An RNA of 177 nucleotides, treated with 2A3 and DMS and read out base by base. Values are in units of 0.01, from 0 to 300, in steps of 10. For 2A3, 859 sequencing reads were counted. For DMS, 1,165 sequencing reads were counted. DMS adducts were read by reverse transcription with MarathonRT.
[RMDB]
RNA sequence: GGGAACGACUCGAGUAGAGUCGAAAAAUAGGUUUCACGAGAUUGUAUCCAUCCCAUGGCCACGACGAGUUCGAUGGCUCGCGUUUCCUCGAGAUCGCAUGCCGCCAUCUCGGCAUCAUGCAUGGCCCCAGGGACUAUCCUUCGGGAUAGUCCCUGGAAAAGAAACAACAACAACAAC
Reactivity to 2A3 in 0.01 (KOAc 150mM, MgCl2 10mM, bicine 150mM(pH8.5), 24C), signal-to-noise 2, nucleotides 027 to 126: a000u230a030g150g030u150u170u100c070a100c090g140a120g030a300u070u080g030u060a030u010c020c000a050u080c050c000c010a020u030g020g050c000c010a010c030g060a000c040g000a060g010u110u080c090g040a210u100g020g000c000u000c040g020c000g030u000u070u000c030c010u070c100g170a250g000a180u040c020g000c010a020u050g010c000c020g050c010c030a050u090c050u000c030g000g040c030a110u090c040a000u130g050c020a050u050g000g010c060c000
Reactivity to DMS in 0.01 (KOAc 150mM, MgCl2 10mM, bicine 150mM(pH8.5), 24C), signal-to-noise 1, nucleotides 027 to 126: a120u050a090g010g080u000u000u000c090a110c050g010a080g000a170u100u000g000u050a210u000c000c080a190u080c000c000c000a040u020g000g000c080c020a000c020g000a140c040g000a110g000u010u000c060g000a010u010g000g010c000u000c030g000c020g000u000u000u000c000c010u020c140g000a060g000a030u020c000g000c030a140u000g000c000c040g010c100c000a010u100c150u150c010g000g000c110a030u000c130a070u000g030c030a010u020g010g040c000c030